[RMDB]
RNA sequence: GGGAACGACUCGAGUAGAGUCGAAAAGCGUACUACUUCAAUGUUUGCCAACAGCUAGGUAUUGGCCUUAUCCCAAAUAGGAUAAGGCAGGCCUAGACAUGGCAAAUAUUGAAGUAUCGCAAAUCUUUCGAGUCAAGUUCGCUUGACUCGAAAGAAAGCAUAAGGGCGAGUUCGCUCGCCCUUAUGCAAAAGAAACAACAACAACAAC
Reactivity to 2A3 in 0.01 (KOAc 150mM, MgCl2 10mM, bicine 150mM(pH8.5), 24C), signal-to-noise 3, nucleotides 027 to 156: g010c020g050u080a100c060u010a000c000u030u000c000a020a000u000g000u000u000u000g020c000c000a100a050c120a210g020c010u010a000g000g030u150a300u240u270g240g020c000c000u000u000a000u020c030c000c030a190a280a130u300a140g000g000a010u010a000a000g020g000c020a000g010g000c000c000u010a030g060a150c020a030u030g010g000c020a000a010a000u000a010u000u000g010a000a000g000u000a000u010c000g000c010a080a090a040u040c000u000u000u000c000g000a010g000u000c000a000a000g010u050u070c200g020c150u000u020g000a000c000u000c000g010a000a000a000g000a000a000a000